The data come from the RNA Mapping Database (RMDB), library M2RFPK. An RNA of 207 nucleotides, treated with DMS and 2A3 and read out base by base. Values are in units of 0.01, from 0 to 300, in steps of 10. Conditions: 150 mM KOAc, 10 mM MgCl2 and 150 mM bicine (pH 8.5), 24 C. For DMS the reverse transcriptase was MarathonRT.
RNA sequence: GGGAACGACUCGAGUAGAGUCGAAAACGGUUACGCCUUCUUUACCGUUAUCAAGGAAGGUACUCGGCCAUGCUAAGGGAAGCAUUAUUCCUUAGGCGCAUGUCGCCGCCAGAAUGGUGUGAGGGGAAAAAGUAUGCUGGGUUCGCCCAGCAUACAAGUUUGUAAAAUAGUUCGCUAUUUUACAAACAAAAGAAACAACAACAACAAC
Reactivity to DMS in 0.01 (KOAc 150mM, MgCl2 10mM, bicine 150mM(pH8.5), 24C), signal-to-noise 5, nucleotides 027 to 156: c020g000g020u000u000a030c020g020c010c000u010u010c020u000u010u010a020c000c020g020u010u000a040u000c100a010a040g000g020a050a020g020g030u000a060c040u000c020g030g010c030c020a060u000g000c030u000a130a140g020g000g020a040a110g020c160a150u010u010a170u000u000c000c000u000u000a130g020g010c050g010c040a100u000g020u000c050g040c020c010g010c070c090a080g010a070a050u000g010g030u000g020u010g010a070g000g020g020g000a070a050a080a110a140g000u000a000u000g010c000u000g020g000g020u000u000c300g040c010c000c000a020g020c000a000u000a000c010a030a080
Reactivity to 2A3 in 0.01 (KOAc 150mM, MgCl2 10mM, bicine 150mM(pH8.5), 24C), signal-to-noise 9, nucleotides 027 to 156: c000g000g010u030u040a020c060g010c000c000u020u010c010u010u040u060a030c020c020g230u120u100a060u110c060a010a010g030g000a000a010g010g000u040a050c040u030c020g020g000c000c010a020u030g020c040u110a050a060g010g000g010a030a010g030c080a170u110u090a110u160u120c000c010u030u050a060g060g020c030g010c050a070u120g050u200c060g010c030c000g020c020c010a070g040a120a060u070g010g030u080g040u080g070a080g000g020g020g030a020a110a000a020a020g000u000a000u000g000c000u000g000g010g000u020u010c030g060c010c000c000a000g000c000a000u000a000c000a000a000